The record gives the reactivity of an RNA of 177 nucleotides to DMS and 2A3. Values cover nucleotides 27 to 126. 2A3 is a SHAPE reagent: it acylates the 2'-hydroxyl of flexible nucleotides of all four kinds.
RNA sequence: GGGAACGACUCGAGUAGAGUCGAAAAUGGAAAGAAUCAUUAAUCUGUCCAGGUGUGAGGACUGCUUUGUGGUUAUGUUUUACAAAGUCUGUUUCUUUAGAGAUAACACACUGAGGUAUUUAUGGCAGAUACCCAACUUUUUCGAAAGUUGGGUAUCAAAAGAAACAACAACAACAAC
Reactivity to DMS in 0.01 (KOAc 150mM, MgCl2 10mM, bicine 150mM(pH8.5), 24C), signal-to-noise 5, nucleotides 027 to 126: u000g010g010a050a050a050g010a080a080u000c050a060u000u010a070a120u010c020u000g000u010c010c030a150g000g020u010g000u000g010a100g000g000a040c020u000g000c050u000u010u000g010u000g030g010u010u010a080u000g010u010u000u010u010a030c040a030a060a020g010u000c170u010g010u000u000u000c010u000u010u010a140g010a130g010a120u000a060a170c030a010c040a020c010u000g010a110g010g020u010a060u000u000u000a040u010g000g020c230a100
Reactivity to 2A3 in 0.01 (KOAc 150mM, MgCl2 10mM, bicine 150mM(pH8.5), 24C), signal-to-noise 3, nucleotides 027 to 126: u120g040g010a090a060a050g040a050a060u050c000a020u090u110a060a060u040c030u060g050u070c030c020a030g010g010u030g030u010g040a020g010g020a020c000u010g000c000u000u000u030g020u030g020g040u120u180a170u230g100u070u270u000u010a020c010a000a040a010g030u010c100u040g030u020u060u020c000u060u060u060a140g010a010g000a080u140a230a000c010a000c000a010c000u010g020a050g170g020u070a100u020u120u050a040u080g040g020c030a020